This 207-nucleotide RNA was probed chemically with DMS and 2A3. It was measured as part of the RMDB library OK3TST. For 2A3 the reverse transcriptase was SuperScript II with manganese. Conditions: 150 mM KOAc, 10 mM MgCl2 and 150 mM bicine (pH 8.5), 24 C.
[RMDB]
RNA sequence: GGGAACGACUCGAGUAGAGUCGAAAAUCAGCCAAGAUUGCCGCAGAUUUGCAGUCACUUCAGACUGGGUGGAGUAUCCAAGUCCAUAGAAGAGCAAAUUCUCACCCUUCGAGGCUGCUGUGGAAGCUACCGGGGCUGGGACAGCAGAGAGGAACCAUAAUUACGCGGAUUUCGAUCCGCGUAAUUAAAAAGAAACAACAACAACAAC
Reactivity to DMS in 0.01 (KOAc 150mM, MgCl2 10mM, bicine 150mM(pH8.5), 24C), signal-to-noise 2, nucleotides 027 to 156: u000c030a050g060c030c010a090a290g010a080u000u030g010c020c030g040c090a120g010a130u000u010u000g050c050a060g000u000c060a090c030u000u010c100a130g020a080c000u000g000g000g000u000g000g040a230g020u010a100u000c050c000a040a080g020u000c030c030a150u000a130g000a000a080g000a100g000c000a040a000a230u000u010c050u010c030a090c000c000c000u000u000c020g030a300g030g040c000u010g020c020u000g060u010g030g000a070a030g030c020u000a080c040c040g000g010g020g010c040u000g000g030g000a120c040a060g020c030a060g010a080g030a130g010g030a130a090c040c050a260
Reactivity to 2A3 in 0.01 (KOAc 150mM, MgCl2 10mM, bicine 150mM(pH8.5), 24C), signal-to-noise 2, nucleotides 027 to 156: u080c010a010g070c060c000a030a040g030a060u030u060g130c070c040g030c060a010g010a100u020u030u080g000c010a010g080u090c050a030c110u070u050c060a050g010a070c040u000g000g030g010u060g050g130a150g050u100a070u010c030c020a060a120g040u100c050c020a080u090a160g030a050a010g020a030g020c010a010a000a100u250u070c040u030c030a030c000c020c000u050u060c040g010a030g070g000c010u010g000c000u030g030u060g040g050a060a010g000c020u020a050c040c030g050g000g050g000c020u030g010g000g030a020c020a010g000c010a010g030a000g010a010g040g030a000a040c010c070a090